The data come from the RNA Mapping Database (RMDB), library OK3TST. The record gives the reactivity of an RNA of 207 nucleotides to 2A3. The reactions ran in a buffer of 150 mM KOAc, 10 mM MgCl2 and 150 mM bicine (pH 8.5), at 24 C. Values cover nucleotides 27 to 156. For 2A3 the reverse transcriptase was SuperScript II with manganese.
RNA sequence: GGGAACGACUCGAGUAGAGUCGAAAAACGAGCGACGUUUACGUGGGGUCACAGUCGGCGCGACUAACCGCCUCCUCGUCUGCUGUUGACAUCCGUUAUUCGUUCGGAACGGCACAGGAUUUCACGGGCAAGGGCUUCUCGAUGGCUCUCAAGCGGAGUUCCGAUUACUGUUCGCAGUAAUCGGAACAAAAGAAACAACAACAACAAC
Reactivity to 2A3 in 0.01 (KOAc 150mM, MgCl2 10mM, bicine 150mM(pH8.5), 24C), signal-to-noise 1, nucleotides 027 to 156: a000c020g020a020g030c000g100a040c060g070u090u130u140a080c060g010u260g010g110g000g000u020c010a000c000a020g030u050c140g000g120c000g000c080g070a090c070u170a130a160c020c080g020c060c000u100c020c000u040c010g020u100c060u030g000c000u000g000u150u100g020a050c040a130u010c030c000g000u010u040a070u060u040c070g000u030u060c010g000g060a060a100c050g010g030c020a020c020a100g000g040a000u000u160u140c080a060c060g010g010g000c030a060a070g020g000g000c000u080u000c050u060c130g160a110u090g020g010c010u020c010u060c070a070a000g040c060g050g000a070